[RMDB]
Chemical mapping of a 177-nucleotide RNA with DMS and 2A3. The 2A3 profile rests on 10,507 reads. For 2A3 the reverse transcriptase was SuperScript II with manganese. The DMS profile rests on 5,692 reads.

RNA sequence: GGGAACGACUCGAGUAGAGUCGAAAAGAUAUGGAGCGUCGCGUCGCCGUUUGACGGCUUCGGAAACGAAGCCCGAGGAACUACGACCUGACGCUCCUAAGUCAAAACGGGCAGUUCGCUGCCCGAAGUUUAAGCUUUUGUUCGCAAAAGCUUAAACAAAAGAAACAACAACAACAAC
Reactivity to DMS in 0.01 (KOAc 150mM, MgCl2 10mM, bicine 150mM(pH8.5), 24C), signal-to-noise 6, nucleotides 027 to 126: g000a050u010a300u010g010g000a010g010c000g010u000c000g050c300g000u010c000g000c060c100g010u000u000u000g000a300c300g010g000c000u000u000c000g000g000a130a070a190c010g010a020a000g010c000c010c020g000a260g010g000a000a000c020u000a050c010g010a020c000c010u000g010a020c000g010c000u000c010c000u000a010a040g010u010c050a070a040a100a230c020g000g000g010c000a010g010u000u020c190g010c010u010g000c000c000c010g000a000a030
Reactivity to 2A3 in 0.01 (KOAc 150mM, MgCl2 10mM, bicine 150mM(pH8.5), 24C), signal-to-noise 2, nucleotides 027 to 126: g020a000u050a060u160g010g000a020g010c010g000u000c010g000c040g010u000c000g020c050c040g010u000u000u080g020a010c010g000g000c000u010u000c000g000g010a090a070a020c020g000a000a010g000c010c000c000g020a040g170g190a000a020c020u040a020c030g000a000c000c000u010g000a000c000g010c000u000c000c000u000a010a000g000u000c010a020a010a040a050c010g000g000g000c000a000g010u070u110c120g060c200u010g000c000c020c000g000a000a000